An RNA of 177 nucleotides, treated with 2A3 and DMS and read out base by base. Values cover nucleotides 27 to 126. It was measured as part of the RMDB library M2PK90. Conditions: 150 mM KOAc, 10 mM MgCl2 and 150 mM bicine (pH 8.5), 24 C. The 2A3 profile rests on 11,842 reads.
RNA sequence: GGGAACGACUCGAGUAGAGUCGAAAAUCAUAGCUUCACCAGCGCGACCUGGUCCUCCACGAGCUGGCCCGCGGCCGCGAGCUCACCUUUUACCUUCCCGCCCACCUCCUCGCGCAGGUACACCGAAUACUAAAGAACAUUUCGAUGUUCUUUAGUAAAAAGAAACAACAACAACAAC
Reactivity to 2A3 in 0.01 (KOAc 150mM, MgCl2 10mM, bicine 150mM(pH8.5), 24C), signal-to-noise 4, nucleotides 027 to 126: u080c020a050u060a130g040c040u130u070c030a030c040c030a020g010c030g010c020g070a090c010c030u030g030g030u040c000c020u040c020c020a050c050g020a030g030c030u030g040g030c020c010c020g090c040g020g010c020c010g030c020g020a020g010c000u010c020a040c000c000u020u060u080u100a090c020c000u010u030c010c010c000g020c000c020c000a050c010c000u020c000c010u020c010g040c000g000c020a020g030g000u030a020c020a020c010c010g020a050a020
Reactivity to DMS in 0.01 (KOAc 150mM, MgCl2 10mM, bicine 150mM(pH8.5), 24C), signal-to-noise 9, nucleotides 027 to 126: u000c090a090u000a110g010c060u000u000c090a100c040c040a060g010c030g020c050g010a080c080c030u000g010g010u000c040c020u000c030c040a100c110g010a090g010c050u000g010g010c030c030c070g020c100g010g010c040c050g010c050g000a060g010c030u000c040a070c060c020u000u000u000u000a100c090c090u000u000c010c010c010g010c040c020c030a100c040c020u000c020c020u000c040g010c040g020c040a040g000g010u000a060c110a120c050c050g010a090a150